[RMDB]
RNA sequence: GGGAACGACUCGAGUAGAGUCGAAAACCUACAUUUACCACUCCGCAUUCAUUGAGUGUGGAAGUUGUGGUAAUGAUUCCUGGCUUACAGGGAAUGCUAUCCAAGGGUUUGCCUGUGGAUGUGGGGCGUGACUAGUAAUGUUCGCAUUACUAGUCACAAAAGAAACAACAACAACAAC
Reactivity to DMS in 0.01 (KOAc 150mM, MgCl2 10mM, bicine 150mM(pH8.5), 24C), signal-to-noise 4, nucleotides 027 to 126: c000c010u000a160c110a100u000u000u000a000c000c000a000c010u000c010c010g000c000a010u000u010c010a260u010u010g010a010g030u000g020u000g000g010a060a100g010u000u020g020u000g010g000u000a010a010u000g000a200u000u000c010c000u000g000g010c220u010u000a080c040a050g000g010g010a040a050u000g010c070u010a040u010c070c060a100a080g000g000g020u010u000u000g010c010c010u000g010u010g010g000a020u010g020u000g010g010g010g020c300
Reactivity to 2A3 in 0.01 (KOAc 150mM, MgCl2 10mM, bicine 150mM(pH8.5), 24C), signal-to-noise 6, nucleotides 027 to 126: c010c000u010a020c020a020u060u070u050a000c000c010a000c010u010c000c010g000c010a010u000u000c020a060u100u300g020a000g000u020g010u010g000g020a040a040g150u170u150g020u030g010g000u000a010a010u020g010a010u040u060c000c000u020g080g000c070u120u150a060c060a020g000g020g050a040a050u090g050c050u080a040u060c020c020a040a030g100g010g030u080u150u130g240c000c010u130g020u030g090g010a020u030g040u060g040g040g020g010c070